[RMDB]
RNA sequence: GGGAACGACUCGAGUAGAGUCGAAAAAAUGGACGUCCGAGAUUCGUCCACGUCACCAUGAGUUAAAAUUUAACUCGCAGAUUCACUCCUGAGUUAAACUUUUACUGGGAGUUAAAUUUUAACUCAUCAUUAAUUGAGUGUUCGCACUCAAUUAAUGAAAAGAAACAACAACAACAAC
Reactivity to DMS in 0.01 (KOAc 150mM, MgCl2 10mM, bicine 150mM(pH8.5), 24C), signal-to-noise 5, nucleotides 027 to 126: a030a030u010g000g000a020c010g000u020c150c180g020a150g010a180u020u010c010g020u000c000c000a010c060g010u010c050a130c010c010a060u010g000a010g000u010u000a000a000a020a010u000u000u000a000a010c010u000c000g000c010a010g000a210u010u010c110a080c100u000c110c130u000g000a050g010u010u010a080a080a210c080u000u020u020u010a120c010u000g000g000g010a020g000u000u000a000a010a020u000u000u010u000a000a010c010u000c000a010u000
Reactivity to 2A3 in 0.01 (KOAc 150mM, MgCl2 10mM, bicine 150mM(pH8.5), 24C), signal-to-noise 9, nucleotides 027 to 126: a000a010u030g000g010a010c020g030u070c080c090g110a070g020a210u120u110c000g000u000c010c000a020c130g030u020c020a170c250c010a030u040g000a000g010u010u010a000a000a010a010u000u000u000a000a000c000u010c010g120c040a010g020a110u120u110c050a040c070u120c040c070u130g040a020g050u060u110a090a160a150c060u100u070u110u250a080c010u020g040g080g000a000g000u000u000a000a000a000u000u000u000u000a000a000c000u000c000a000u000